[RMDB]
RNA sequence: GGGAACGACUCGAGUAGAGUCGAAAAUAUCCCACUCGGCGCUAUUUUAUAUCCGUGUAUGGCGUUGGUGGGACCGGCAUGCACUGCCAUGCCGGGCGGUGCAUCAAGGCCUAGCGUCGGCUAGAAAAGUCUCAGGACGAUUCGUCGUUCUGGGGCUAAAAGAAACAACAACAACAAC
Reactivity to 2A3 in 0.01 (KOAc 150mM, MgCl2 10mM, bicine 150mM(pH8.5), 24C), signal-to-noise 6, nucleotides 027 to 126: u070a010u010c000c000c000a010c000u040c010g000g000c000g000c000u000a020u030u080u030u040a120u040a040u080c050c040g040u030g030u070a060u060g010g000c050g030u000u000g000g000u000g020g000g000a000c000c000g000g010c010a000u000g000c010a030c240u110g000c040c000a010u030g000c000c000g000g000g000c010g050g040u110g060c000a010u010c000a010a010g070g000c000c000u010a000g000c000g020u010c000g010g000c010u020a010g080a020a070a000
Reactivity to DMS in 0.01 (KOAc 150mM, MgCl2 10mM, bicine 150mM(pH8.5), 24C), signal-to-noise 5, nucleotides 027 to 126: u060a010u000c000c000c000a030c010u000c010g010g000c000g000c000u000a000u010u010u000u020a070u000a150u050c210c280g010u040g030u020a080u020g010g010c000g000u000u000g000g040u000g010g000g000a050c020c020g000g000c040a000u000g000c010a140c160u020g010c080c010a030u010g010c030c040g010g000g010c050g010g030u020g000c000a010u000c010a050a050g010g010c030c010u000a060g010c020g000u000c030g010g010c210u010a090g000a080a080a100

Structure probing data (2A3 and DMS) for a 177-nucleotide construct. The RNA was probed in 150 mM KOAc, 10 mM MgCl2 and 150 mM bicine (pH 8.5) at 24 C. It was measured as part of the RMDB library OK1LIB. DMS adducts were read by reverse transcription with MarathonRT.